[RMDB]
RNA sequence: GGGAACGACUCGAGUAGAGUCGAAAAUGACAAACUUAGUAGUGUUUGUGAGGAUUAACAACAAUUAACACAGUGCGAGCUGUUUCUUGGCACGAAGAUCUCGAUGUCUAAGAAACCAGGAGGGCCCAACAGUCCUAGUAUUCGUACUAGGACUGUUAAAAGAAACAACAACAACAAC
Reactivity to DMS in 0.01 (KOAc 150mM, MgCl2 10mM, bicine 150mM(pH8.5), 24C), signal-to-noise 7, nucleotides 027 to 126: u000g020a140c060a050a060a070c040u000u000a110g020u000a100g020u000g000u000u000u000g000u000g010a110g010g010a140u010u010a060a090c130a070a050c100a060a070u010u000a040a070c090a040c070a060g010u000g000c070g020a080g000c090u000g000u000u000u000c010u000u000g000g010c000a030c010g000a040a130g000a110u010c090u000c010g010a100u000g010u000c010u010a020a020g000a020a020a040c090c130a060g010g010a080g010g010g000c000c020c080
Reactivity to 2A3 in 0.01 (KOAc 150mM, MgCl2 10mM, bicine 150mM(pH8.5), 24C), signal-to-noise 4, nucleotides 027 to 126: u130g020a020c030a020a080a010c020u100u090a030g060u060a030g020u160g040u080u050u060g040u030g040a120g090g040a130u140u200a050a040c050a020a000c000a040a120u170u060a110a000c010a010c000a040g030u030g060c020g030a030g020c030u010g010u010u010u020c000u010u010g030g010c010a000c020g000a060a050g030a100u060c020u010c050g130a180u020g010u000c000u020a000a010g000a010a020a000c020c010a020g040g060a040g040g050g000c010c010c020